Structure probing data (DMS and 2A3) for a 177-nucleotide construct. Reactivities are rounded to 0.1 and cut off at 0 and 3. 2A3 adducts were read by reverse transcription with SuperScript II with manganese. The RNA was probed in 150 mM KOAc, 10 mM MgCl2 and 150 mM bicine (pH 8.5) at 24 C. It was measured as part of the RMDB library OK1LIB.

RNA sequence: GGGAACGACUCGAGUAGAGUCGAAAAGAGCGUCGAGAGACGAAGAGAAGUGCAUGGAUCCACAACGGAGAACGUAAUAAUGCACGCAUGUGGCUUAGUGUCCGGAACAACGGGCACAAGAGGCAGAAUAGCGCAUCAUAUUCGUAUGAUGCGCUAUAAAAGAAACAACAACAACAAC
Reactivity to DMS in 0.01 (KOAc 150mM, MgCl2 10mM, bicine 150mM(pH8.5), 24C), signal-to-noise 6, nucleotides 027 to 126: g010a080g010c020g010u000c020g000a200g010a200g020a020c010g000a060a070g010a090g030a100a140g010u010g020c000a020u020g000g000a160u000c010c020a100c140a090a110c150g000g000a100g010a080a080c110g030u040a060a100u030a070a030u000g000c010a000c000g000c130a080u020g020u000g000g010c010u000u010a100g020u010g000u010c000c010g000g040a120a130c280a140a160c010g000g000g020c000a000c000a010a030g010a040g000g020c010a050g000a100
Reactivity to 2A3 in 0.01 (KOAc 150mM, MgCl2 10mM, bicine 150mM(pH8.5), 24C), signal-to-noise 4, nucleotides 027 to 126: g040a020g010c010g000u000c000g000a030g010a010g000a030c020g020a030a030g060a010g040a250a030g000u020g000c010a010u060g040g090a050u030c060c000a070c030a160a080c120g000g010a110g050a190a040c040g040u080a050a030u100a140a000u060g010c000a000c010g070c070a070u110g030u060g140g040c000u010u030a060g000u000g010u000c000c000g000g030a010a140c100a110a050c060g000g000g000c000a000c010a010a020g040a000g010g020c030a000g040a130